[RMDB]
The record gives the reactivity of an RNA of 177 nucleotides to DMS and 2A3. DMS adducts were read by reverse transcription with MarathonRT. The reactions ran in a buffer of 150 mM KOAc, 10 mM MgCl2 and 150 mM bicine (pH 8.5), at 24 C. The 2A3 profile rests on 2,114 reads. The DMS profile rests on 1,674 reads. For 2A3 the reverse transcriptase was SuperScript II with manganese.

RNA sequence: GGGAACGACUCGAGUAGAGUCGAAAACUUCGUCCUCGUACGCGAUGACAAGAUCUUUCUCUCUCGGGAUCUCAUCGAUGUGGUGUUCUACGGGAUAGAACUCAUCAGGGUCUUGCUCGACAUCAUGAGCCAGAGGAAAUUUCGAUUUCCUCUGGCUAAAAGAAACAACAACAACAAC
Reactivity to DMS in 0.01 (KOAc 150mM, MgCl2 10mM, bicine 150mM(pH8.5), 24C), signal-to-noise 2, nucleotides 027 to 126: c090u000u000c060g010u010c020c040u010c060g040u000a040c150g000c050g000a040u000g010a090c060a040a020g000a010u000c020u010u000u000c010u010c030u000c000u000c020g000g000g000a040u000c040u030c030a050u000c160g000a100u000g030u010g000g010u000g030u020u000c020u000a110c010g020g000g000a170u000a010g000a040a060c210u000c110a090u000c230a130g000g010g020u010c020u000u000g010c030u000c040g000a070c090a060u010c120a070u000g010
Reactivity to 2A3 in 0.01 (KOAc 150mM, MgCl2 10mM, bicine 150mM(pH8.5), 24C), signal-to-noise 2, nucleotides 027 to 126: c020u050u050c000g070u040c020c010u020c020g050u090a030c110g030c020g090a030u050g060a070c000a020a030g000a050u010c020u010u150u000c010u000c000u000c010u020c000g030g000g040a090u020c060u010c070a070u050c050g160a180u230g090u120g080g050u040g040u060u000c010u080a140c040g140g000g030a030u050a050g030a030a030c030u020c110a200u100c080a120g040g020g000u020c020u010u020g000c010u020c020g060a050c030a060u100c020a030u140g090